The record gives the reactivity of an RNA of 177 nucleotides to 2A3 and DMS. Reactivities are rounded to 0.1 and cut off at 0 and 3. For 2A3 the reverse transcriptase was SuperScript II with manganese. High 2A3 reactivity points to a flexible backbone, as in loops and unpaired stretches. Conditions: 150 mM KOAc, 10 mM MgCl2 and 150 mM bicine (pH 8.5), 24 C. Source: RMDB library OK1LIB, as collected in RNAgym.

RNA sequence: GGGAACGACUCGAGUAGAGUCGAAAAGGCUUUCACGGAUCGAAUCGGAGUUCUUGGCCAGUCUGCGAGCCUGUUCGAAUGGGCCAGAAGAUUGAUGACUUGACGUUUUAAUGACGUGCUAAAUGCCCAGCAGUAUCGUCUUCGGACGAUACUGCUGAAAAGAAACAACAACAACAAC
Reactivity to 2A3 in 0.01 (KOAc 150mM, MgCl2 10mM, bicine 150mM(pH8.5), 24C), signal-to-noise 2, nucleotides 027 to 126: g000g000c050u040u120u040c050a050c040g050g080a100u080c010g060a100a060u030c000g030g050a000g000u070u000c010u030u110g050g000c010c000a000g010u010c000u000g010c030g010a020g040c000c000u040g020u070u070c040g080a100a060u170g040g000g000c000c000a030g020a090a000g050a030u120u180g100a100u070g110a080c020u050u000g030a000c000g040u010u010u000u130a150a220u220g020a010c000g000u000g000c010u040a120a100a090u090g030c060c070
Reactivity to DMS in 0.01 (KOAc 150mM, MgCl2 10mM, bicine 150mM(pH8.5), 24C), signal-to-noise 1, nucleotides 027 to 126: g000g000c010u000u000u000c060a030c000g010g000a130u000c030g050a050a060u000c040g000g000a040g000u020u000c020u010u030g010g060c030c040a080g010u020c000u000g000c220g010a090g030c040c030u000g010u020u010c100g010a130a050u030g000g000g040c000c040a190g010a050a050g010a140u000u020g000a100u000g000a060c030u010u000g010a060c040g000u000u000u000u010a030a120u050g000a040c000g010u000g000c130u050a080a040a040u000g010c010c050